Source: RMDB library OK3TST, as collected in RNAgym. Structure probing data (DMS and 2A3) for a 207-nucleotide construct. The 2A3 profile rests on 6,079 reads. For 2A3 the reverse transcriptase was SuperScript II with manganese. The DMS profile rests on 9,017 reads. Conditions: 150 mM KOAc, 10 mM MgCl2 and 150 mM bicine (pH 8.5), 24 C.
RNA sequence: GGGAACGACUCGAGUAGAGUCGAAAAGCCAUUGCUUAGCAAGAGGCAGAGAGUUGCCAAGUUGCGCUUUUCAGCUUAGGCAGAGAGGCCACAUUCACACACACAAGCACAUUGCAGUUCAUUGCGCUUAGCAAGUUCAGCGCAGUUUUCAUUGCAGAAAACAGAGUUGAUUCGUCAACUCUGUUUUAAAAGAAACAACAACAACAAC
Reactivity to DMS in 0.01 (KOAc 150mM, MgCl2 10mM, bicine 150mM(pH8.5), 24C), signal-to-noise 4, nucleotides 027 to 156: g030c010c020a150u000u010g000c000u000u010a150g030c040a060a070g000a150g040g030c030a110g010a140g000a120g030u000u000g020c010c030a100a230g020u000u000g010c000g030c080u010u010u000u000c030a090g020c040u000u000a060g010g020c040a100g000a100g010a120g030g010c000c030a050c100a090u010u010c060a070c080a100c070a090c050a080c080a050a080g000c020a050c050a080u000u000g030c000a110g000u000u000c080a080u000u000g010c000g020c000u010u010a090g000c040a060a090g000u010u000c040a110g010c000g000c000a030g020u000u000u030u000c080a080u000u000g000c040a130g010
Reactivity to 2A3 in 0.01 (KOAc 150mM, MgCl2 10mM, bicine 150mM(pH8.5), 24C), signal-to-noise 6, nucleotides 027 to 156: g020c000c010a060u030u120g020c030u130u130a060g010c040a060a020g020a120g090g000c060a000g030a010g010a020g100u140u170g010c010c010a070a040g040u070u050g040c050g010c070u100u080u060u100c040a010g010c010u040u090a090g030g000c020a000g020a010g010a020g060g020c040c010a040c020a050u130u150c030a040c000a010c000a000c000a000c010a140a030g020c020a030c010a090u040u110g000c010a010g000u020u050c010a020u030u050g000c010g010c010u060u040a060g050c110a230a090g060u120u080c040a010g020c000g000c010a000g000u010u000u010u070c060a070u060u100g020c060a030g120
DMS adducts were read by reverse transcription with MarathonRT.